[RMDB]
RNA sequence: GGGAACGACUCGAGUAGAGUCGAAAAGAUAUGGAACCGGCUGACGUUGAAAUGUGUCAAUUCGGAAACGAAUUGAGCACAUGGAGUCAGCGGUUCCUAAGUCAAACGUUAACGUUCGCGUUAACGACCUUUCUCGUAGCUUCGGCUACGAGAAAGGAAAAGAAACAACAACAACAAC
Reactivity to DMS in 0.01 (KOAc 150mM, MgCl2 10mM, bicine 150mM(pH8.5), 24C), signal-to-noise 1, nucleotides 027 to 126: g040a000u000a300u000g020g000a010a000c000c000g000g030c000u000g010a000c020g000u010u010g030a160a120a050u000g030u000g010u000c000a010a010u000u000c000g000g010a050a070a210c000g010a030a010u000u000g000a120g030c000a000c000a010u000g000g000a110g000u000c000a000g010c000g000g000u000u000c000c000u000a030a050g010u000c040a100a070a180c020g010u000u000a000a000c000g000u000u010c220g000c020g020u000u010a020a000c000g020a050
Reactivity to 2A3 in 0.01 (KOAc 150mM, MgCl2 10mM, bicine 150mM(pH8.5), 24C), signal-to-noise 2, nucleotides 027 to 126: g000a020u030a000u100g020g000a020a000c030c010g300g120c100u010g010a000c000g230u300u180g300a300a300a080u030g000u000g010u060c000a000a000u000u020c000g040g000a030a070a010c010g000a010a010u010u020g010a080g020c000a010c000a010u030g040g000a040g000u000c000a000g000c000g000g000u020u000c000c000u010a030a030g000u060c040a040a060a160c020g010u000u010a010a020c000g030u040u070c300g000c010g140u050u000a020a000c010g050a100